[RMDB]
RNA sequence: GGGAACGACUCGAGUAGAGUCGAAAAUCUGUGUCUUGACUGUGUCAGUGUCAACAUCCUGGUUGAGAUACAGUACAGAGUUUUGGAAGAUGUUGCCAUUGGGGAAAACUGGAUAUAGAGUACACCAUACUCACAAAACAUUCGUGUUUUGUGAGUAAAAAGAAACAACAACAACAAC
Reactivity to DMS in 0.01 (KOAc 150mM, MgCl2 10mM, bicine 150mM(pH8.5), 24C), signal-to-noise 5, nucleotides 027 to 126: u010c010u000g010u000g010u000c010u000u010g010a040c030u000g020u000g020u010c060a100g010u010g020u000c050a040a020c030a060u010c120c070u000g010g020u000u000g000a040g010a050u010a020c030a030g010u000a120c100a080g010a090g010u000u000u000u010g020g000a150a120g000a040u000g010u010u010g010c050c030a100u010u010g000g000g000g000a070a040a080a090c060u000g000g000a050u000a070u010a060g000a100g010u000a080c120a110c040c050a210
Reactivity to 2A3 in 0.01 (KOAc 150mM, MgCl2 10mM, bicine 150mM(pH8.5), 24C), signal-to-noise 3, nucleotides 027 to 126: u020c000u010g030u000g010u000c000u010u060g020a060c020u020g010u000g040u250c030a050g050u020g060u100c020a030a010c010a050u080c020c040u070g070g000u020u020g040a040g000a040u050a050c010a010g010u030a030c030a030g150a050g030u050u060u140u090g090g010a060a040g010a040u040g040u070u060g030c020c010a010u030u060g000g010g000g080a020a060a030a060c020u030g020g010a000u000a010u040a070g040a000g060u070a030c030a020c080c000a010